This 207-nucleotide RNA was probed chemically with 2A3. Conditions: 150 mM KOAc, 10 mM MgCl2 and 150 mM bicine (pH 8.5), 24 C.
[RMDB]
RNA sequence: GGGAACGACUCGAGUAGAGUCGAAAACCUUUGGCUACUACCCGGUGGAAACAACUGAAGCUUCAACGCCUUUUUUUCCUAUCUUCUUUAGCACCGGGCUAGGGAGUAAGCCCGUGGAACCUUAGUUUUGUUCCCUCGGGACUUACUUGUGGUUCCUCACUACCUAGUAGUUCGCUACUAGGUAGUGAAAAGAAACAACAACAACAAC
Reactivity to 2A3 in 0.01 (KOAc 150mM, MgCl2 10mM, bicine 150mM(pH8.5), 24C), signal-to-noise 4, nucleotides 027 to 156: c000c000u030u050u090g080g000c040u110a070c000u030a010c130c010c020g000g040u050g010g160a180a080a080c070a080a000c060u040g030a090a000g010c030u180u220c150a140a090c110g070c020c080u090u060u030u010u010u100u140c050c030u100a170u120c080u130u060c000u030u190u140a080g080c000a000c000c000g000g000g000c010u010a000g000g020g000a010g000u010a000a000g000c000c000c000g020u010g000g000a010a010c000c020u120u080a220g090u140u260u190u170g010u020u020c020c010c020u060c020g010g010g090a130c010u000u000a000c010u010u030g040u020g040g110u060u000c000c000u000
Values cover nucleotides 27 to 156.